[RMDB]
RNA sequence: GGGAACGACUCGAGUAGAGUCGAAAAUGAGUUAUGACCACUGCUGUAAGCCAUAGGUAGUUAUUGAAAGCUGCUAUGGAGAGGAGCCACAGAAGCAGAUGUUUUAGAUAGGAUUCCUCUGGGGUCCGAUUGGAUCCUUGUUCGCAAGGAUCCAAUCAAAAGAAACAACAACAACAAC
Reactivity to 2A3 in 0.01 (KOAc 150mM, MgCl2 10mM, bicine 150mM(pH8.5), 24C), signal-to-noise 2, nucleotides 027 to 126: u120g020a040g110u190u180a090u130g060a030c000c010a080c050u020g040c040u080g070u180a120a030g070c010c010a010u000a030g080g100u040a000g030u070u090a140u110u300g080a250a070a020g000c030u000g020c010u000a000u020g030g000a030g010a030g010g020a020g020c000c030a050c020a010g100a080a020g000c010a010g000a140u130g100u040u120u040u050a050g010a110u070a050g050g020a020u020u100c000c000u150c150u220g000g000g000g000u000c060c040
Reactivity to DMS in 0.01 (KOAc 150mM, MgCl2 10mM, bicine 150mM(pH8.5), 24C), signal-to-noise 3, nucleotides 027 to 126: u000g020a060g020u000u000a060u010g010a180c020c030a130c040u000g000c040u000g010u000a070a120g020c000c010a010u000a030g020g010u000a020g020u000u010a220u010u010g000a200a130a100g010c040u010g000c020u010a040u000g000g010a090g010a120g020g000a090g010c040c030a060c090a090g020a080a030g010c030a050g020a090u000g030u000u000u010u000a120g000a160u000a070g000g010a050u010u000c010c000u000c130u010g000g000g000g000u000c050c050